[RMDB]
RNA sequence: GGGAACGACUCGAGUAGAGUCGAAAAGGCCUCGUAAAAAGCCGCACCGUUAUAGUUGCAAACGACUCUAACUACUCUCUAGCAGCUUAGGCUAGCUAGCCAUCUGACCCAGGUUUCUCAAAUGGGCGGGGUAUACAGAUGGUCAUAUAACAUUUGACAAUAAAGUCUUCUUCGGAAGACUUUAUUGAAAAGAAACAACAACAACAAC
Reactivity to DMS in 0.01 (KOAc 150mM, MgCl2 10mM, bicine 150mM(pH8.5), 24C), signal-to-noise 1, nucleotides 027 to 156: g060g030c000c000u000c090g020u000a080a060a030a050a000g010c020c000g020c070a240c050c040g000u000u000a040u010a110g000u000u010g020c060a170a110a220c010g000a050c050u000c030u000a040a090c040u000a010c030u000c080u000c030u010a050g040c020a060g010c030u010u010a040g070g030c040u000a100g020c020u010a060g010c030c010a060u000c030u010g000a090c010c010c000a110g080g020u010u000u020c000u000c000a110a040a160u010g000g030g020c000g030g000g010g010u010a060u000a300c010a030g010a040u010g040g020u020c040a060u010a090u010a090a070c070a140u000u000u000g000a280
Reactivity to 2A3 in 0.01 (KOAc 150mM, MgCl2 10mM, bicine 150mM(pH8.5), 24C), signal-to-noise 2, nucleotides 027 to 156: g020g010c010c010u080c100g070u080a080a110a070a110a120g020c050c020g010c050a060c040c010g000u010u070a070u040a130g040u010u060g080c070a010a120a050c040g010a030c020u000c040u070a050a070c040u140a070c030u080c020u000c000u060a010g000c010a010g000c010u100u070a110g150g000c010u030a060g000c000u000a000g000c010c000a000u010c010u020g060a040c000c000c010a090g000g140u000u000u000c010u010c000a000a010a010u010g000g000g000c020g030g000g020g000u070a110u050a180c010a010g000a000u000g010g020u000c020a080u160a010u050a140a010c000a000u000u000u000g020a000
Description:
An RNA of 207 nucleotides, treated with DMS and 2A3 and read out base by base. The reactions ran in a buffer of 150 mM KOAc, 10 mM MgCl2 and 150 mM bicine (pH 8.5), at 24 C.